[RMDB]
An RNA of 207 nucleotides, treated with 2A3 and DMS and read out base by base. As a SHAPE reagent, 2A3 marks flexible, mostly unpaired nucleotides at the ribose 2'-OH. For DMS, 5,333 sequencing reads were counted. The 2A3 profile rests on 5,328 reads. The RNA was probed in 150 mM KOAc, 10 mM MgCl2 and 150 mM bicine (pH 8.5) at 24 C. Source: RMDB library OK3TST, as collected in RNAgym.
RNA sequence: GGGAACGACUCGAGUAGAGUCGAAAACACGUCCAUCGCAGGAUGGGAAAGCAUGCCUCAAGUUCGAUGAGCGGUUCGAUGGAUGGGAAAGCAUGCGCUUGGUGCAUGCGAAAGGAUGGAUAUGUUACGGCGUACGGAAACCAUCCCGUGCUGCGGACCGGAUAGAUAAGUUCGCUUAUCUAUCCGGAAAAGAAACAACAACAACAAC
Reactivity to 2A3 in 0.01 (KOAc 150mM, MgCl2 10mM, bicine 150mM(pH8.5), 24C), signal-to-noise 5, nucleotides 027 to 156: c070a020c030g010u000c010c000a020u020c030g030c140a060g030g090a040u050g030g050g030a050a040a010g040c020a020u100g030c000c010u050c010a080a080g050u120u100c080g080a120u110g020a020g020c040g060g030u040u050c040g020a080u100g080g010a050u050g010g020g040a070a070a010g020c010a010u050g020c030g020c070u040u110g120g030u060g010c000a000u010g000c010g020a050a030a000g050g010a020u050g020g010a040u030a020u170g070u070u100a050c070g060g010c030g030u050a020c010g030g040a060a060a020c010c000a010u020c000c000c010g010u030g000c050u150g030c010g000g000a000
Reactivity to DMS in 0.01 (KOAc 150mM, MgCl2 10mM, bicine 150mM(pH8.5), 24C), signal-to-noise 2, nucleotides 027 to 156: c030a080c010g030u020c010c010a040u000c020g020c100a090g020g000a070u000g000g010g020a070a080a160g030c020a050u000g040c000c010u010c020a060a170g010u000u010c080g040a090u010g000a100g020c020g020g030u010u000c040g030a100u000g020g010a090u000g000g020g000a110a090a180g030c020a030u000g010c060g000c150u000u020g000g020u000g000c000a030u000g000c000g000a050a040a100g010g010a070u000g000g010a130u000a050u000g030u000u000a110c100g010g000c040g030u000a120c070g020g020a110a110a140c040c020a080u010c010c010c000g050u000g000c020u000g020c020g010g000a180